[RMDB]
RNA sequence: GGGAACGACUCGAGUAGAGUCGAAAAUAUACACAUGUUUAGGUUUCAUGUGUACUUGCUAUUUUGGUGUCUUCUCUCUUUUGAACCUUAAGCUUAGAGCACCUAUGGGUGUCUAUGACUUUAAGGUCUAUAAGUGCUUCUUCGGAAGCACUUAUAGAAAAGAAACAACAACAACAAC
Reactivity to 2A3 in 0.01 (KOAc 150mM, MgCl2 10mM, bicine 150mM(pH8.5), 24C), signal-to-noise 1, nucleotides 027 to 126: u040a000u020a000c000a000c000a000u020g010u020u040u090a160g070g130u130u160u110c000a000u010g010u000g000u020a040c040u070u120g080c020u040a070u040u120u030u210g110g050u090g010u060c020u050u000c000u000c000u020c020u060u110u030u060g090a050a040c000c000u000u010a000a000g000c000u000u000a010g000a050g080c000a000c000c000u030a130u290g150g000g000u000g000u000c000u010a020u000g010a100c010u060u060u030a000a000g000g020u020
This 177-nucleotide RNA was probed chemically with 2A3. The reactions ran in a buffer of 150 mM KOAc, 10 mM MgCl2 and 150 mM bicine (pH 8.5), at 24 C.